[RMDB]
RNA sequence: GGGAACGACUCGAGUAGAGUCGAAAACCCUGGUUAUUCGUAACCAGGGGUUGAGUGAAUCCUCUCAGUGCAUCGGAGGAUCACACGAAACGCAUGGACGACAAUUACGGUUAUUCGUAACCGUAAAGGGUAUUCGACAUUUCGAUGUCGAAUACCCAAAAGAAACAACAACAACAAC
Reactivity to DMS in 0.01 (KOAc 150mM, MgCl2 10mM, bicine 150mM(pH8.5), 24C), signal-to-noise 1, nucleotides 027 to 126: c030c000c000u000g010g060u000u000a010u000u000c150g050u000a010a000c000c020a010g050g050g000g030u000u000g000a230g010u000g000a180a110u000c000c000u000c000u010c120a070g040u000g010c190a030u050c220g000g000a010g050g000a000u000c000a020c020a050c000g010a110a020a070c180g010c110a060u000g010g010a010c080g000a050c100a080a100u000u000a000c000g000g000u000u010a030u000u000c260g010u010a000a010c000c000g010u000a010a010a050
Reactivity to 2A3 in 0.01 (KOAc 150mM, MgCl2 10mM, bicine 150mM(pH8.5), 24C), signal-to-noise 1, nucleotides 027 to 126: c000c010c000u020g020g040u000u030a050u070u050c180g030u010a000a000c000c000a000g000g010g000g000u020u070g070a000g040u020g060a090a030u020c020c010u000c010u020c070a090g090u060g230c040a230u070c060g000g000a010g010g000a000u000c010a020c000a000c090g040a050a040a000c070g040c100a120u080g110g030a030c020g000a010c070a110a050u050u010a000c000g000g040u020u000a010u000u040c110g020u030a020a000c010c020g010u000a010a010a010